[RMDB]
RNA sequence: GGGAACGACUCGAGUAGAGUCGAAAAUACCGUCUUCUCCCCGACGGUUUCAAUCCAUAGCUUCACGUUGUGUAGCGGAGGUGGAAGGUAUCGUGUGGUGUAUAAACACCACAUAGUCUCUUAGGGGUCAAGCUGAUAAACUUCGGUUUAUCAGCAACAUAUAUCGAAGCUUCGGCUUCGAUAUAUGAAAAGAAACAACAACAACAAC
Reactivity to DMS in 0.01 (KOAc 150mM, MgCl2 10mM, bicine 150mM(pH8.5), 24C), signal-to-noise 4, nucleotides 027 to 156: u000a050c000c000g010u000c010u000u010c050u000c010c000c020c060g000a050c010g020g030u000u000u000c070a090a160u000c020c030a110u000a150g000c020u000u000c020a060c040g010u020u010g020u010g010u000a060g020c030g010g010a060g030g030u000g000g020a060a070g020g020u000a070u010c090g020u000g020u000g010g040u020g030u000a180u000a130a140a110c010a030c000c000a000c000a010u000a030g020u000c030u000c020u000u010a210g040g030g010g000u000c040a050a210g020c010u000g010a010u000a000a010a010c010u010u010c300g070g000u000u000u000a010u000c000a020g020c000a010a030
Reactivity to 2A3 in 0.01 (KOAc 150mM, MgCl2 10mM, bicine 150mM(pH8.5), 24C), signal-to-noise 8, nucleotides 027 to 156: u060a010c000c000g010u000c020u200u040c040u090c010c010c000c010g000a010c010g010g010u000u040u050c050a020a040u030c000c010a040u040a090g010c010u040u060c020a040c090g300u290u270g050u090g050u130a020g020c030g050g060a100g040g060u040g030g050a060a020g060g030u090a050u180c050g000u010g000u000g010g010u010g060u020a070u140a240a250a020c000a000c000c000a000c000a000u010a000g020u000c010u000c020u100u190a030g000g010g010g000u040c080a080a040g000c000u000g010a000u000a000a000a000c000u030u070c160g080g000u000u000u000a000u000c000a000g000c000a000a000

Chemical mapping of a 207-nucleotide RNA with DMS and 2A3.